[RMDB]
RNA sequence: GGGAACGACUCGAGUAGAGUCGAAAAUACAAUAAUGUGGUGGGAUUAGUGAUGAACCAGGAAAAUUUCCGAUUUUGUACAUCAUGUCCUCUCGGAAUUUACCCCUGCUUUGCCAAUUCUAAUCGGAAAAGAGUUCAGUUUUCGAACUGAACUCUUUAAAAGAAACAACAACAACAAC
Reactivity to DMS in 0.01 (KOAc 150mM, MgCl2 10mM, bicine 150mM(pH8.5), 24C), signal-to-noise 2, nucleotides 027 to 126: u000a140c120a090a090u000a050a100u000g000u000g010g020u000g000g030g000a060u000u000a070g030u000g000a020u010g000a050a080c130c050a020g000g000a050a060a050a060u010u010u000c000c020g010a080u000u020u000u010g000u020a060c020a120u020c190a100u010g000u000c040c040u000c170u020c000g010g010a050a040u000u000u000a110c300c100c010c020u000g000c140u000u000u000g000c040c020a070a060u030u000c040u000a040a060u000c080g000g000a080